[RMDB]
The record gives the reactivity of an RNA of 177 nucleotides to DMS and 2A3. Conditions: 150 mM KOAc, 10 mM MgCl2 and 150 mM bicine (pH 8.5), 24 C. For 2A3 the reverse transcriptase was SuperScript II with manganese. The data come from the RNA Mapping Database (RMDB), library M2PK90.
RNA sequence: GGGAACGACUCGAGUAGAGUCGAAAAAACAGCUGCACGUACGUACGAGCAGUUUUCGAAAUAAACGUACGAACGAAAUAAAUAAAUUCUACUCGAUGCGAAACAAAGCAAAGUCGUUCCCAGGGAAUGCUAAUAAUCCUUUCGAGGAUUAUUAGCAAAAAGAAACAACAACAACAAC
Reactivity to DMS in 0.01 (KOAc 150mM, MgCl2 10mM, bicine 150mM(pH8.5), 24C), signal-to-noise 2, nucleotides 027 to 126: a090a060c170a080g000c030u000g010c020a240c000g010u020a070c210g000u010a010c030g000a020g030c070a080g000u000u010u000u000c070g000a090a050a170u000a070a060a060c060g010u000a040c090g000a050a040c040g000a020a060a060u010a050a030a050u000a070a020a060u000u000c000u000a010c000u010c000g030a200u000g040c010g000a050a070a130c300a110a070a210g020c020a180a300a000g010u000c000g020u000u010c000c000c000a030g010g000g000a190a100
Reactivity to 2A3 in 0.01 (KOAc 150mM, MgCl2 10mM, bicine 150mM(pH8.5), 24C), signal-to-noise 3, nucleotides 027 to 126: a000a000c100a010g050c020u050g020c030a020c050g020u090a000c040g070u110a010c000g020a010g020c030a030g000u040u000u020u040c030g030a040a050a040u150a040a100a010c040g020u100a020c060g040a130a010c030g010a090a030a160u130a010a080a000u130a040a060a030u080u020c000u010a010c000u000c010g030a040u070g000c020g040a110a120a060c080a120a070a000g000c010a090a010a000g000u010c000g010u010u000c000c000c000a000g000g010g000a110a080